[RMDB]
RNA sequence: GGGAACGACUCGAGUAGAGUCGAAAAUAAUGGCGAAUGGGACCCCAGAUUUCCUUCCUAUUGAGAAGGAAAUAACUGGCACUCCCUUAGCCAUCCGAGUGGACGUUGUCCUCCUUCGGAUGCCCAGCCUCAAAGGAAGGUUCGCCUUCCUUUGAGGAAAAGAAACAACAACAACAAC
Reactivity to 2A3 in 0.01 (KOAc 150mM, MgCl2 10mM, bicine 150mM(pH8.5), 24C), signal-to-noise 1, nucleotides 027 to 126: u110a030a100u010g010g020c010g030a030a020u010g010g010g000a000c010c090c000c150a000g000a030u000u000u000c000c010u000u020c010c030u200a300u240u300g070a300g010a050a030g010g000a000a000a000u050a050a080c010u000g000g010c020a010c000u000c000c010c070u000u000a000g020c000c000a000u000c010c000g010a040g020u000g010g030a030c280g140u170u280g000u190c030c040u000c000c060u080u070c010g050g000a040u070g000c030c000c000a010g110
Reactivity to DMS in 0.01 (KOAc 150mM, MgCl2 10mM, bicine 150mM(pH8.5), 24C), signal-to-noise 1, nucleotides 027 to 126: u000a120a120u000g010g010c000g020a220a090u020g000g000g000a020c300c300c010c020a010g000a060u000u000u010c000c000u000u000c000c040u000a170u000u000g010a140g000a030a010g000g010a000a000a010u000a030a080c020u000g010g030c080a140c300u030c040c000c000u000u000a170g000c040c030a000u000c000c010g010a020g030u000g000g020a040c060g040u050u050g030u000c020c030u000c060c170u000u000c000g010g000a200u030g000c070c000c000a060g000
Description
The record gives the reactivity of an RNA of 177 nucleotides to 2A3 and DMS. For DMS the reverse transcriptase was MarathonRT. The DMS profile rests on 679 reads. For 2A3, 672 sequencing reads were counted. The data come from the RNA Mapping Database (RMDB), library 15KREP. Conditions: 150 mM KOAc, 10 mM MgCl2 and 150 mM bicine (pH 8.5), 24 C. 2A3 adducts were read by reverse transcription with SuperScript II with manganese.